[RMDB]
RNA sequence: GGGAACGACUCGAGUAGAGUCGAAAACACUAUGUCGGCGCCCUGGGCGCGCCGGGCAACAUCACGCCGUAUUUCGACAAGCUGUCGAAGGAAGGCCUGCUGUUCACCCAGUUCUUCUCCAACGGCACCAAAAUAUUAGGUUCGCCUAAUAUUUUGGAAAAGAAACAACAACAACAAC
Reactivity to 2A3 in 0.01 (KOAc 150mM, MgCl2 10mM, bicine 150mM(pH8.5), 24C), signal-to-noise 6, nucleotides 027 to 126: c030a010c040u170a110u230g070u070c020g000g030c020g030c040c080c130u260g110g080g070c060g000c010g000c020c010g000g020g000c030a040a020c010a060u080c030a010c060g000c000c000g050u070a070u020u030u010c000g000a010c040a150a140g140c190u130g070u000c000g010a010a010g000g010a060a010g000g010c010c010u020g000c000u030g040u090u060c060a100c030c010c000a010g010u050u000c010u040u000c020u010c020c010a050a030c020g040g000c020a020
Reactivity to DMS in 0.01 (KOAc 150mM, MgCl2 10mM, bicine 150mM(pH8.5), 24C), signal-to-noise 7, nucleotides 027 to 126: c080a120c140u020a090u010g000u000c020g010g010c020g020c000c020c170u000g010g020g030c110g020c030g020c020c020g030g010g020c250a030a040c040a040u000c090a070c300g010c000c010g000u010a200u010u000u000c000g010a010c010a110a210g020c220u010g010u000c000g010a010a030g000g020a100a190g000g000c050c040u000g010c080u010g000u000u000c100a110c040c060c010a050g000u000u000c040u000u010c020u000c080c090a080a070c050g000g010c040a250
Notes: An RNA of 177 nucleotides, treated with 2A3 and DMS and read out base by base. The DMS profile rests on 7,918 reads. For 2A3 the reverse transcriptase was SuperScript II with manganese. Values cover nucleotides 27 to 126. Source: RMDB library OK2TST, as collected in RNAgym. DMS (dimethyl sulfate) methylates the pairing face of unpaired adenines and cytosines. For DMS the reverse transcriptase was MarathonRT. The RNA was probed in 150 mM KOAc, 10 mM MgCl2 and 150 mM bicine (pH 8.5) at 24 C.